[RMDB]
Chemical mapping of a 207-nucleotide RNA with DMS and 2A3. It was measured as part of the RMDB library OK3TST.

RNA sequence: GGGAACGACUCGAGUAGAGUCGAAAACGAUCAGUACGUUCGCGUACUGAUCGAAGCUUCUGGAGACAGAAGCAAGUCGCUGACCUUAUUAGGCGGAAGUAAGGAAACCAUUUAGUUGGCCCCUCUAAAUGACAGCGACGACCGCCUUGGGGCCUAAUAGUUUGAAUGGAUUCGUCCAUUCAAACUAAAAAGAAACAACAACAACAAC
Reactivity to DMS in 0.01 (KOAc 150mM, MgCl2 10mM, bicine 150mM(pH8.5), 24C), signal-to-noise 1, nucleotides 027 to 156: c010g000a010u000c000a000g020u010a000c000g020u000u000c300g000c000g090u030a000c000u000g010a000u000c020g020a050a070g000c040u000u010c000u000g020g010a300g000a300c000a000g000a060a020g020c020a030a080g010u000c010g080c020u000g020a300c030c050u000u000a080u000u020a020g000g040c040g000g000a230a130g010u000a000a040g020g000a130a170a250c090c020a020u000u050u000a060g000u000u000g020g020c110c020c000c020u000c040u000a020a010a060u010g000a210c060a020g010c000g020a050c000g000a090c120c080g010c070c050u010u000g010g000g010g010c010c000u030a050a140
Reactivity to 2A3 in 0.01 (KOAc 150mM, MgCl2 10mM, bicine 150mM(pH8.5), 24C), signal-to-noise 1, nucleotides 027 to 156: c020g000a000u000c000a010g000u000a000c020g000u000u050c150g010c000g090u000a000c000u010g000a000u010c010g000a010a020g000c010u010u000c000u000g000g000a040g000a000c000a000g000a000a010g000c000a000a010g000u000c000g000c000u000g070a090c000c000u000u010a010u020u070a080g130g020c030g030g020a030a010g030u010a000a000g020g020a090a020a000c040c000a000u000u010u000a010g010u010u090g010g010c010c000c000c000u010c020u000a000a010a010u010g020a030c010a010g010c000g000a000c000g020a010c040c040g020c000c020u000u010g000g000g000g000c010c000u010a010a020